The record gives the reactivity of an RNA of 177 nucleotides to 2A3 and DMS. Values cover nucleotides 27 to 126. For 2A3 the reverse transcriptase was SuperScript II with manganese. For 2A3, 1,705 sequencing reads were counted.

[RMDB]
RNA sequence: GGGAACGACUCGAGUAGAGUCGAAAAUUGGUCGCCUAGGGGAUGGAGAUAUGGAAAGGGUCUCGUGUGCUGUCAGUCGGUCGAAAGACGCGCUUGCAACAUGGGCCUAUAACCGGAUAAGUCAUAGAUAUAAGCGAGCAUUCGUGCUCGCUUAUAUAAAAGAAACAACAACAACAAC
Reactivity to 2A3 in 0.01 (KOAc 150mM, MgCl2 10mM, bicine 150mM(pH8.5), 24C), signal-to-noise 3, nucleotides 027 to 126: u050u110g060g010u080c020g000c020c030u040a050g000g000g000g020a000u040g050g030a070g020a030u060a050u180g030g020a040a100a060g070g010g020u020c040u060c090g060u020g010u020g030c100u040g060u110c010a010g010u080c030g060g010u010c030g050a100a070a010g000a000c010g000c000g000c240u000u000g000c000a040a050c010a030u040g000g040g000c010c010u060a070u050a060a040c010c010g020g010a040u050a160a020g020u060c050a040u030a050g110
Reactivity to DMS in 0.01 (KOAc 150mM, MgCl2 10mM, bicine 150mM(pH8.5), 24C), signal-to-noise 4, nucleotides 027 to 126: u020u020g000g020u000c040g020c020c060u000a100g010g000g020g020a040u000g010g010a070g000a030u010a120u040g000g010a060a120a200g000g030g000u010c020u010c040g030u010g000u010g000c050u000g000u020c300a050g020u020c000g000g010u010c000g000a070a070a150g000a000c040g010c020g000c010u010u000g000c020a020a020c030a010u020g000g000g000c010c000u000a050u030a050a150c050c030g000g010a120u030a080a120g010u010c040a050u010a090g000